[RMDB]
Overview: Chemical mapping of a 207-nucleotide RNA with 2A3. For 2A3, 463 sequencing reads were counted.
RNA sequence: GGGAACGACUCGAGUAGAGUCGAAAAGACUAGUUCUGAUGAUGAGGGAUUGAAAUGGCUAGUCAAUUAUUCCAUGGUGGAAGAGAACAGCAACAUAAAUCUUAAAAACGUGUCAGAUACUUUUGGAAUGAGGUUUUGCUCUCAGCUGGAAACCGCAAGGAGGUAACACUUUCGAGUGUUACCUCCUAAAAGAAACAACAACAACAAC
Reactivity to 2A3 in 0.01 (KOAc 150mM, MgCl2 10mM, bicine 150mM(pH8.5), 24C), signal-to-noise 1, nucleotides 027 to 156: g020a000c000u000a000g020u140u230c040u110g050a050u010g020a030u040g080a070g080g000g030a030u040u140g080a130a040a070u100g010g020c010u000a020g050u000c000a000a080u070u070a080u010u030c020c020a080u140g090g010u030g000g010a030a000g000a000g000a050a050c000a050g050c000a010a060c000a020u120a050a240a030u080c030u080u160a110a100a020a000a040c060g000u020g010u040c000a000g000a030u040a170c060u080u090u100u160g030g000a110a020u050g020a080g000g000u070u050u120u020g020c000u000c000u030c010a070g000c020u040g000g010a080a000a080c020c020g080c080a000